[RMDB]
The record gives the reactivity of an RNA of 177 nucleotides to DMS and 2A3. Source: RMDB library OK1LIB, as collected in RNAgym. Conditions: 150 mM KOAc, 10 mM MgCl2 and 150 mM bicine (pH 8.5), 24 C. Values are in units of 0.01, from 0 to 300, in steps of 10.

RNA sequence: GGGAACGACUCGAGUAGAGUCGAAAAAGGGUGCCGCCGUGCGGAGCUAUGGCGCCAGGGCUGUCGGGUGGGGGCACGCCACCUGUGACAGCUUCGUCCGAGCAAGUGGUUCCUGGUGCGAAGCUGGUCUAGGGAGCGCGUUCGCGCGCUUCCUAGGAAAAGAAACAACAACAACAAC
Reactivity to DMS in 0.01 (KOAc 150mM, MgCl2 10mM, bicine 150mM(pH8.5), 24C), signal-to-noise 5, nucleotides 027 to 126: a060g000g010g020u010g010c040c050g020c030c040g010u010g000c030g000g000a180g010c030u000a070u010g000g000c000g000c070c030a060g000g000g000c010u000g010u010c020g000g010g020u010g000g000g020g000g010c040a020c070g000c010c010a010c010c010u000g010u040g000a050c020a010g000c000u010u010c050g010u020c030c020g010a130g010c140a110a080g010u010g010g010u010u010c010c000u000g000g000u030g010c000g000a060a080g010c030u010g000g010
Reactivity to 2A3 in 0.01 (KOAc 150mM, MgCl2 10mM, bicine 150mM(pH8.5), 24C), signal-to-noise 3, nucleotides 027 to 126: a000g050g000g000u020g010c000c010g030c010c020g030u050g040c020g010g010a010g000c020u030a040u080g000g000c000g000c000c010a010g000g020g000c010u000g000u040c010g000g010g000u010g000g000g010g030g030c030a010c000g020c000c010a010c000c000u050g040u060g020a010c000a010g000c010u010u020c010g010u000c000c010g010a020g000c030a140a020g050u020g050g020u040u030c000c000u010g040g010u040g000c030g010a020a000g020c030u010g000g000